[RMDB]
RNA sequence: GGGAACGACUCGAGUAGAGUCGAAAACGUAUCUUCGGAUACGCACUGUCCUAAGUCAGCCUGAGGCUCCUGCUAGAAUGCAGUCGGAAACGACUGCCAUUCUUGGACCAGGAGCUACCCACCAGGCUGAUAUGGAGCGCUUCAGUUUCGACUGAAAAGAUGUAAUGAGAUUCGUCUCAUUACAUCUAAAAGAAACAACAACAACAAC
Reactivity to 2A3 in 0.01 (KOAc 150mM, MgCl2 10mM, bicine 150mM(pH8.5), 24C), signal-to-noise 4, nucleotides 027 to 156: c000g000u000a000u010c010u070u080c290g160g000a010u010a010c020g030c020a100c070u140g060u060c000c000u050a160a030g030u000c000a000g000c000c000u010g000a010g010g000c010u010c000c000u010g000c000u000a000g010a000a000u000g000c000a000g010u000c000g020g090a080a060a050c010g010a000c000u000g000c040c010a010u000u000c000u010u060g050g070a120c090c010a000g000g000a000g000c000u000a000c000c000c010a060c010c000a000g000g020c000u000g000a000u000a000u020g020g000a070g080c140g040c110u140u120c040a030g020u060u060u150c120g110a040c040u060g040a040a100a030
Reactivity to DMS in 0.01 (KOAc 150mM, MgCl2 10mM, bicine 150mM(pH8.5), 24C), signal-to-noise 3, nucleotides 027 to 156: c040g010u000a010u000c000u000u000c250g080g000a020u000a010c020g000c000a060c080u000g000u000c010c000u000a100a300g030u000c000a020g000c000c010u000g010a130g040g030c000u010c010c000u020g010c030u000a030g010a060a020u000g000c000a020g000u000c000g030g010a170a150a270c010g020a010c000u000g020c090c040a000u000u000c010u010u000g040g010a130c290c010a030g010g010a030g020c000u000a000c000c000c010a300c080c010a000g010g020c000u000g020a010u010a090u020g010g000a090g050c050g000c060u000u000c030a040g010u000u010u010c100g020a130c040u000g000a040a070a210